[RMDB]
RNA sequence: GGGAACGACUCGAGUAGAGUCGAAAAGAUAUGGAUCACCAUGGACAUGAUUGUCUCGGAAACGAGCAAUCAACAGCCAUUGUGAUCCUAAGUCAAACAAACAUGUCAGUUCGCUGACAUGUUUGAAGUAAUAAAAGGAGUUCGCUCCUUUUAUUACAAAAGAAACAACAACAACAAC
Reactivity to DMS in 0.01 (KOAc 150mM, MgCl2 10mM, bicine 150mM(pH8.5), 24C), signal-to-noise 9, nucleotides 027 to 126: g010a020u000a160u010g000g000a010u000c000a000c000c060a020u000g000g010a160c160a130u000g000a010u000u000g000u010c010u000c000g000g010a040a040a090c010g010a010g010c000a000a000u000c000a030a150c300a090g000c010c000a010u000u000g010u000g000a000u000c000c000u000a010a060g000u000c020a130a120a250c020a000a010a000c000a000u000g000u000c000a010g010u000u010c230g020c000u000g000a000c000a010u000g000u000u000u000g000a060a130
Reactivity to 2A3 in 0.01 (KOAc 150mM, MgCl2 10mM, bicine 150mM(pH8.5), 24C), signal-to-noise 5, nucleotides 027 to 126: g020a000u020a020u050g000g000a000u000c000a000c010c030a000u020g000g050a150c080a190u030g030a010u040u020g170u140c010u000c030g000g000a000a010a010c000g000a000g010c000a000a000u020c000a000a040c070a010g080c000c000a010u000u000g000u000g010a000u000c000c000u000a000a000g010u010c010a110a070a100c000a010a010a000c000a010u000g000u000c000a000g010u040u180c270g040c190u000g000a000c000a000u000g000u000u000u000g000a000a010
The record gives the reactivity of an RNA of 177 nucleotides to DMS and 2A3. The DMS profile rests on 17,982 reads. For 2A3 the reverse transcriptase was SuperScript II with manganese. For DMS the reverse transcriptase was MarathonRT. The data come from the RNA Mapping Database (RMDB), library TTRDEL.